An RNA of 177 nucleotides, treated with DMS and 2A3 and read out base by base.
The RNA was probed in 150 mM KOAc, 10 mM MgCl2 and 150 mM bicine (pH 8.5) at 24 C.
Source: RMDB library OK2TST, as collected in RNAgym.
RNA sequence: GGGAACGACUCGAGUAGAGUCGAAAAAUUGGCUAAGUAGAAAAUCUCUAUCAUUUAGAGGUGCAAUCAAUAUAGUUUCUGGGUUUUCUAUCAUAAUGGUAUGAACAGAUUCCAUCUCUAAACUAGAAGAGUUAUGGAUAUUCGUAUCCAUAACUCUAAAAGAAACAACAACAACAAC
Reactivity to DMS in 0.01 (KOAc 150mM, MgCl2 10mM, bicine 150mM(pH8.5), 24C), signal-to-noise 2, nucleotides 027 to 126: a120u000u010g030g010c020u000a050a120g010u010a060g000a080a060a090a080u000c040u000c130u000a050u020c120a100u000u000u000a020g010a040g010g000u000g030c230a030a030u000c040a070a160u010a110u030a100g000u000u000u000c060u000g000g000g000u020u000u000u010c040u000a020u010c050a060u000a080a100u000g000g030u000a040u020g000a040a070c080a140g000a010u000u000c230c010a000u000c010u000c010u000a020a030a030c190u000a060g010a180
Reactivity to 2A3 in 0.01 (KOAc 150mM, MgCl2 10mM, bicine 150mM(pH8.5), 24C), signal-to-noise 1, nucleotides 027 to 126: a000u050u050g040g000c050u050a160a000g030u030a050g170a030a110a130a160u020c030u000c020u080a150u150c020a060u030u030u000a000g000a000g000g050u000g000c000a060a060u060c010a060a020u220a030u040a270g080u090u070u000c120u140g110g030g000u000u090u040u000c000u030a040u040c000a040u270a300a080u220g060g010u090a040u170g070a010a000c000a030g000a020u000u000c060c000a000u010c020u060c030u120a060a040a040c010u060a060g050a110